[RMDB]
RNA sequence: GGGAACGACUCGAGUAGAGUCGAAAAGGCGGUUGCUGAAAUGAAAGGAAUCAUUGAACGCCAUCAGGCCAAAUGAUUUUUACCGUUGCAUCAUGUCGCCCAAUAUGAUGCUUGCUCGUACCAGGCCUUAGAAAGUAUGCUUCGGCAUACUUUCUAAAAAAGAAACAACAACAACAAC
Reactivity to DMS in 0.01 (KOAc 150mM, MgCl2 10mM, bicine 150mM(pH8.5), 24C), signal-to-noise 7, nucleotides 027 to 126: g000g020c050g010g000u000u010g010c050u020g000a070a070a060u020g000a080a180a140g010g000a050a010u000c010a010u000u000g010a110a150c290g000c010c010a120u050c200a130g010g000c020c070a140a040a020u000g000a010u010u000u000u010u020a120c190c070g010u010u000g000c010a010u000c020a020u000g000u000c050g000c020c010c010a090a050u010a020u010g000a020u010g000c010u000u010g000c050u000c080g000u010a080c090c030a070g010g010c040c060
Reactivity to 2A3 in 0.01 (KOAc 150mM, MgCl2 10mM, bicine 150mM(pH8.5), 24C), signal-to-noise 5, nucleotides 027 to 126: g060g000c000g020g000u070u090g030c080u090g040a050a060a070u150g030a160a020a030g110g030a020a010u010c010a010u020u040g060a140a050c070g010c020c000a100u250c150a100g010g000c010c000a010a050a030u020g020a030u020u020u050u090u080a090c030c040g030u030u070g000c000a020u000c000a010u070g020u020c030g030c020c000c000a010a000u060a000u040g020a020u030g000c000u010u080g020c020u020c040g030u040a050c010c020a060g020g040c010c010

The record gives the reactivity of an RNA of 177 nucleotides to DMS and 2A3. It was measured as part of the RMDB libraries RFM100 and RFMREP. Reactivities are rounded to 0.1 and cut off at 0 and 3. 2A3 adducts were read by reverse transcription with SuperScript II with manganese.